Conditions: 150 mM KOAc, 10 mM MgCl2 and 150 mM bicine (pH 8.5), 24 C. The record gives the reactivity of an RNA of 177 nucleotides to 2A3 and DMS. Values cover nucleotides 27 to 126. The 2A3 profile rests on 1,998 reads.

[RMDB]
RNA sequence: GGGAACGACUCGAGUAGAGUCGAAAACGGCACUGCUUCGGCAGUGCCGAAAUCUUGGCCAAAUGUAUAGGAUAAAGCAGGCGGAAGUGCAGUUAGAAUAAGAAAGUAACACCUUCGGGUGUUACAAGUACGUUAUAGGGUUCGCCCUAUAACGUACAAAAGAAACAACAACAACAAC
Reactivity to 2A3 in 0.01 (KOAc 150mM, MgCl2 10mM, bicine 150mM(pH8.5), 24C), signal-to-noise 2, nucleotides 027 to 126: c000g050g060c000a000c020u000g070c030u070u120c170g100g010c010a010g000u010g000c000c000g000a010a020a000u000c010u010u100g050g010c010c010a030a070a090u100g030u060a080u080a140g030g080a090u100a120a090a000g040c020a010g060g010c000g040g020a090a030g040u030g020c030a010g020u090u160a060g080a180a060u160a170a040g110a090a100a000g000u010a000a000c000a000c010c000u050u140c290g070g020g000u000g000u010u000a000c000a000a000
Reactivity to DMS in 0.01 (KOAc 150mM, MgCl2 10mM, bicine 150mM(pH8.5), 24C), signal-to-noise 3, nucleotides 027 to 126: c030g020g020c000a020c000u000g020c000u000u010c190g020g020c010a010g040u000g010c000c000g010a010a020a070u000c060u000u000g010g010c030c030a050a070a050u020g010u000a050u010a130g010g000a080u000a060a080a120g010c040a050g010g010c090g010g000a050a060g010u010g000c070a030g020u020u010a090g010a120a070u000a040a080g000a090a100a150g000u000a000a010c000a000c000c000u000u010c190g000g020g000u000g000u000u000a000c000a050a060